An RNA of 207 nucleotides, treated with 2A3 and read out base by base. Conditions: 150 mM KOAc, 10 mM MgCl2 and 150 mM bicine (pH 8.5), 24 C. Reactivities are given for positions 27 through 156.
RNA sequence: GGGAACGACUCGAGUAGAGUCGAAAACAGGAUCGACGAGGGUGUAAAGAGCGACUUUUUGUUCGGUAUUGUACCACCGUUAUCGGGCUAAACUUGUAGUUGCAAAUGACAACUAUGCGGAAGCUCGUCUCGCUGCUUAAUUGCGGUGUGACACUUCGCUCAUCUCACAGUUCGCUGUGAGAUGAGCAAAAGAAACAACAACAACAAC
Reactivity to 2A3 in 0.01 (KOAc 150mM, MgCl2 10mM, bicine 150mM(pH8.5), 24C), signal-to-noise 2, nucleotides 027 to 156: c020a050g060g080a030u060c020g000a000c010g000a010g010g050g040u030g020u050a100a080a000g020a010g020c030g030a030c020u140u070u050u130u100g070u120u080c010g020g010u030a000u010u050g050u010a020c000c020a020c000c040g090u050u010a060u100c010g000g000g000c010u000a020a160a060c040u040u130g010u010a010g010u020u000g000c030a050a140a190u230g050a200c000a010a000c010u020a050u000g060c000g070g010a000a050g030c140u130c200g060u000c000u020c020g000c030u010g020c000u120u140a080a020u300u110g020c020g050g000u040g000u000g020a000c000a020c070u000u000c010